Source information
Source: RMDB library ARCHII, as collected in RNAgym. The record gives the reactivity of an RNA of 207 nucleotides to 2A3.
RNA sequence: GGGAACGACUCGAGUAGAGUCGAAAAGGGGGUCACAAAAUCACUUGGUGCAUGCCGAGGGGGCCGCUUUCCUCGUAAAUCCAGCAGCAAACUUAUAGUUGCCAACGAAGACAACUUCGCUGUAGCCGCUUAAGGCUUAAGCCUCGAAACUGCUUGUCUUUUUAAGAAGGUUCGCCUUCUUAAAAAGAAAAGAAACAACAACAACAAC
Reactivity to 2A3 in 0.01 (KOAc 150mM, MgCl2 10mM, bicine 150mM(pH8.5), 24C), signal-to-noise 1, nucleotides 027 to 156: g000g000g020g000g000u020c030a010c010a060a160a040a060u160c080a090c190u030u000g000g020u090g030c130a100u130g000c020c000g000a030g000g010g000g030g020c030c000g050c020u010u080u040c010c000u050c000g030u030a010a030a080u020c000c000a000g000c010a000g030c010a080a080a030c030u070u110a070u060a230g020u000u010g010c010c000a040a050c040g040a030a000g020a050c000a140a120c020u020u000c030g000c000u030g060u190a030g000c000c000g060c040u100u200a040a020g000g020c010u010u080a040a000g020c010c000u060c020g070a140a000a050c040u090g000c000u110u100g050u000